[RMDB]
RNA sequence: GGGAACGACUCGAGUAGAGUCGAAAAGCCCUACGUGUGUCUCCUAGCUAAUAAAGAGCAAGAAGCUAUUUUGAUGUCUGAAGACGUUAAGUUAAACCCUUCAGAAGAUUUUAUAAAGCACGUCCGCCACAUUAUAAGCCUUCGGGCUUAUAAUGUGAAAAGAAACAACAACAACAAC
Reactivity to DMS in 0.01 (KOAc 150mM, MgCl2 10mM, bicine 150mM(pH8.5), 24C), signal-to-noise 1, nucleotides 027 to 126: g020c020c010c000u000a050c060g020u010g020u000g000u010c010u010c030c020u000a140g000c040u000a060a070u030a060a110a100g010a050g030c020a150a080g020a040a040g010c180u000a070u000u000u000u010g000a110u000g000u010c010u000g010a020a030g000a040c200g010u020u000a050a110g010u000u020a100a010a040c020c050c000u000u000c020a030g000a070a040g020a130u000u000u010u010a050u010a010a080a070g010c000a030c020g010u020c180c110g000c220